RNA sequence: GGGAACGACUCGAGUAGAGUCGAAAACGGGGGAAGACCUAUCUACUCAUCGCCAUUGUAGAUAGGUUGCUCAGGCAGGGCGCGAGUGUCCUCGUCAAGUCCUAUGAAGUCAAGGAAUACGUUUGGCUGGCCCGGCUUAUCUCGGUGGCAACUGCGGUAACAUGCCUAAAUUCGUUUAGGCAUGUUAAAAAGAAACAACAACAACAAC
Reactivity to DMS in 0.01 (KOAc 150mM, MgCl2 10mM, bicine 150mM(pH8.5), 24C), signal-to-noise 4, nucleotides 027 to 156: c050g010g020g030g030g020a120a100g000a040c010c020u000a010u010c000u000a010c000u000c110a110u000c100g020c090c070a190u000u010g000u000a020g000a000u000a020g000g020u000u000g010c060u000c060a100g020g020c040a070g010g030g020c040g020c070g010a140g030u000g010u010c020c010u000c040g000u010c040a100a100g010u010c030c010u000a120u010g010a070a080g020u000c070a070a070g010g020a100a090u000a080c090g020u000u000u000g010g020c020u010g020g000c010c010c110g020g010c030u000u000a090u000c030u010c030g000g030u000g030g000c020a060a090c050u000g000c060g010g010
Reactivity to 2A3 in 0.01 (KOAc 150mM, MgCl2 10mM, bicine 150mM(pH8.5), 24C), signal-to-noise 4, nucleotides 027 to 156: c040g000g000g000g010g010a020a060g020a030c000c010u010a010u010c000u010a010c020u040c110a190u130c090g060c070c020a070u040u120g010u000a010g000a000u000a000g010g000u010u010g000c010u010c010a030g050g030c020a000g050g010g000c050g000c030g040a030g030u090g050u070c010c020u010c010g020u010c030a120a000g030u000c000c000u070a120u130g120a100a010g060u090c060a020a040g060g020a090a090u160a110c040g030u050u090u050g040g000c020u020g010g030c000c000c000g010g000c010u080u110a100u070c070u030c030g000g010u010g010g000c020a050a050c050u070g030c030g050g020